Annotation:
The record gives the reactivity of an RNA of 207 nucleotides to DMS and 2A3.
RNA sequence: GGGAACGACUCGAGUAGAGUCGAAAAUGAAGCCAUGUUCCGGUCCUUCAUGCCCGAAGAUGGGCAGGUGAACAUCUCCAUCGGGGAGAUGGUGCCCAGCAGGCAGGCCUUCGAGUCCAUGCUGCGCUACAUCUACUACGGCGAGGUCAACAUGCCGUCAUGCCAAGGGAUUCGUCCCUUGGCAUGAAAAAGAAACAACAACAACAAC
Reactivity to DMS in 0.01 (KOAc 150mM, MgCl2 10mM, bicine 150mM(pH8.5), 24C), signal-to-noise 1, nucleotides 027 to 156: u010g000a060a120g020c040c010a050u000g030u000u000c040c040g010g000u000c060c030u000u020c080a140u020g010c030c000c020g010a060a090g010a150u020g000g030g030c010a050g010g030u020g000a080a090c050a080u000c000u010c000c010a280u020c150g000g010g010g020a010g010a020u010g000g010u000g000c000c020c040a210g020c020a100g000g000c050a080g000g000c000c040u000u000c030g000a070g030u010c010c050a120u010g010c020u000g000c070g000c030u000a080c010a090u010c010u000a100c020u000a140c000g010g000c100g000a100g020g040u000c100a070a010c040a060u000g050c000c020g010
Reactivity to 2A3 in 0.01 (KOAc 150mM, MgCl2 10mM, bicine 150mM(pH8.5), 24C), signal-to-noise 3, nucleotides 027 to 156: u050g020a020a000g030c030c050a080u150g120u160u130c120c070g030g040u060c030c000u020u060c020a030u090g030c000c000c000g060a120a040g040a050u080g020g000g000c030a030g010g050u090g040a040a010c010a030u010c000u000c040c030a190u280c160g260g050g080g010a000g000a000u020g000g010u020g000c040c010c000a020g000c020a000g110g000c020a000g000g020c020c050u140u130c120g050a100g020u000c010c010a070u080g020c010u040g010c000g020c020u070a100c030a050u000c010u070a110c020u030a020c040g020g000c020g010a070g040g080u060c050a050a030c010a090u090g000c000c000g030
It was measured as part of the RMDB library OK3TST. The 2A3 profile rests on 2,079 reads. High 2A3 reactivity points to a flexible backbone, as in loops and unpaired stretches. The reactions ran in a buffer of 150 mM KOAc, 10 mM MgCl2 and 150 mM bicine (pH 8.5), at 24 C. Values cover nucleotides 27 to 156.